[RMDB]
RNA sequence: GGGAACGACUCGAGUAGAGUCGAAAAUGUGGCCGAAAGGCUCGGCGAUCGUCGACGGCUACAAUGUCGCCGGGCAGCUCCGCGAUCACCUCCGCCGAGGCACGAAGCUUUAUCGCGUGGAUACCCAAGUCCGCAUCGACGAGGAUCCGGAGAUCGGAAAUGUGUUUCUUUUCGAAGAAACACAUUUAAAAGAAACAACAACAACAAC
Reactivity to 2A3 in 0.01 (KOAc 150mM, MgCl2 10mM, bicine 150mM(pH8.5), 24C), signal-to-noise 5, nucleotides 027 to 156: u170g030u090g050g020c010c010g070a070a050a030g160g000c000u010c000g000g000c010g020a070u110c090g120u060c060g070a110c070g100g000c040u140a060c110a080a130u250g020u030c000g000c000c000g000g000g000c000a010g000c010u000c000c000g040c110g030a010u040c090a060c120c010u040c040c040g000c020c010g020a020g030g000c030a020c170g120a110a030g010c000u170u210u110a140u200c050g010c020g060u090g010g020a020u120a180c000c050c010a020a040g050u010c010c000g030c040a040u050c010g030a050c010g000a010g010g010a010u010c000c010g000g000a010g000a040u090c020g010g030
Reactivity to DMS in 0.01 (KOAc 150mM, MgCl2 10mM, bicine 150mM(pH8.5), 24C), signal-to-noise 3, nucleotides 027 to 156: u000g020u000g010g010c020c010g010a100a080a150g010g000c010u000c010g030g030c000g000a040u010c090g020u000c050g010a220c000g030g000c030u010a110c100a070a090u000g050u000c010g000c000c000g030g010g040c040a150g000c010u000c010c010g000c110g010a060u010c050a100c080c000u000c040c020g010c020c040g010a050g010g020c050a080c050g000a100a130g020c050u000u010u010a060u020c080g000c070g010u000g010g010a120u010a060c070c030c070a200a280g000u000c000c050g020c050a090u000c010g020a060c010g000a110g010g000a050u000c020c010g020g010a110g000a070u000c010g000g000